[RMDB]
The record gives the reactivity of an RNA of 177 nucleotides to 2A3 and DMS. For DMS, 3,766 sequencing reads were counted. The reactions ran in a buffer of 150 mM KOAc, 10 mM MgCl2 and 150 mM bicine (pH 8.5), at 24 C. Values cover nucleotides 27 to 126.
RNA sequence: GGGAACGACUCGAGUAGAGUCGAAAACAUUGAUGAUCUCGCCACGCACACCGAAAUCUUCCAGCACGCCCUCAAGCAGACGGGCAUUCUGCUCCAGCGCAUCCUUGGAAAGCGCGGGGUCGCGCUACCACGUAUUAGCUUUCGAGCUAAUACGUGGAAAAGAAACAACAACAACAAC
Reactivity to 2A3 in 0.01 (KOAc 150mM, MgCl2 10mM, bicine 150mM(pH8.5), 24C), signal-to-noise 3, nucleotides 027 to 126: c050a050u110u200g080a070u060g020a030u120c040u020c030g020c030c010a060c040g020c000a030c010a030c060c020g050a050a040a070u060c050u070u030c030c010a000g030c020a020c050g010c010c000c000u040c020a050a080g040c020a000g030a050c030g020g030g000c020a020u060u010c000u030g030c010u020c020c040a020g000c000g000c010a030u040c010c020u060u110g060g050a170a100a010g040c050g010c030g020g010g000g050u060c020g000c010g010c010u040a080
Reactivity to DMS in 0.01 (KOAc 150mM, MgCl2 10mM, bicine 150mM(pH8.5), 24C), signal-to-noise 4, nucleotides 027 to 126: c080a140u010u010g010a100u020g000a070u000c020u010c040g010c030c010a070c080g010c060a050c070a080c050c040g010a030a130a090u010c050u000u000c030c030a060g040c050a070c110g000c030c030c010u010c090a060a110g020c050a050g020a070c080g000g020g010c060a070u010u000c040u000g000c020u000c060c060a070g020c070g010c050a100u010c050c040u010u000g020g010a060a100a060g010c030g010c020g020g010g000g000u010c030g030c030g010c020u000a180